[RMDB]
RNA sequence: GGGAACGACUCGAGUAGAGUCGAAAACACGCAGCCGUCACGUGCUAGCCAUGCAGCGCGUGGGUCAGGACACCGUGCUGAAGUGGCGGAAGCGUCGGUGUCACGCUGACCGAUUGCGCGACACGACGCAGGUGCGGAGCUUCGGCUUCGUACUUGCAAAAGAAACAACAACAACAAC
Reactivity to 2A3 in 0.01 (KOAc 150mM, MgCl2 10mM, bicine 150mM(pH8.5), 24C), signal-to-noise 8, nucleotides 027 to 126: c060a000c030g030c020a010g040c030c010g050u060c010a010c030g030u040g030c040u040a040g040c020c030a080u200g020c060a030g010c010g000c000g010u060g020g030g030u010c010a010g020g030a000c000a000c000c010g030u030g010c010u090g040a200a060g040u070g090g030c030g020g040a050a010g010c010g060u050c020g040g010u000g000u010c050a050c150g100c010u010g010a030c000c000g060a140u190u300g000c000g000c000g000a010c020a000c010g200a030c130
Reactivity to DMS in 0.01 (KOAc 150mM, MgCl2 10mM, bicine 150mM(pH8.5), 24C), signal-to-noise 3, nucleotides 027 to 126: c070a060c080g000c090a060g010c030c020g000u010c010a060c010g020u020g020c020u000a070g010c060c100a080u100g010c110a080g020c000g020c000g000u010g000g010g010u020c030a030g000g000a050c020a020c030c010g050u020g010c010u000g020a160a120g010u010g000g000c010g010g010a120a020g010c010g000u010c030g010g020u010g010u000c000a110c190g060c010u010g010a180c040c050g000a140u020u030g000c000g000c000g000a220c300a140c090g000a280c290
Chemical mapping of a 177-nucleotide RNA with 2A3 and DMS. The DMS profile rests on 9,355 reads. The data come from the RNA Mapping Database (RMDB), library OK1LIB. For 2A3 the reverse transcriptase was SuperScript II with manganese. Reactivities are rounded to 0.1 and cut off at 0 and 3.